[RMDB]
RNA sequence: GGGAACGACUCGAGUAGAGUCGAAAAGGAUCCUGUCCAAAGUAUGCUGGUUAACAGAGAACCAACAUGCUAGGGUGUGAUCAGUCUGGGACGGUGCUGAGCACUGAGCUGUGAAAGUGUUCUAUAUGGAACAGACUUUGCGAUUCUGUUCUCAGGACCGUCGGUACAGAUUCGUCUGUACCGACGGAAAAGAAACAACAACAACAAC
Reactivity to 2A3 in 0.01 (KOAc 150mM, MgCl2 10mM, bicine 150mM(pH8.5), 24C), signal-to-noise 2, nucleotides 027 to 156: g100g020a030u010c000c000u030g010u000c000c010a120a000a030g010u000a000u010g000c020u010g030g000u140u090a140a150c110a210g110a050g060a110a010c040c000a000a010c000a000u000g030c010u070a040g000g000g010u040g010u050g050a030u050c000a010g030u000c020u030g000g040g030a020c030g070g040u130g010c020u090g040a010g000c030a000c000u010g050a040g010c060u060g030u010g040a060a070a050g030u040g020u030u010c060u040a220u050a070u290g020g020a010a000c000a000g030a070c010u050u060u090g030c000g040a050u060u000c010u020g090u110u000c050u000c020a000g000g130a080

This 207-nucleotide RNA was probed chemically with 2A3. The reactions ran in a buffer of 150 mM KOAc, 10 mM MgCl2 and 150 mM bicine (pH 8.5), at 24 C.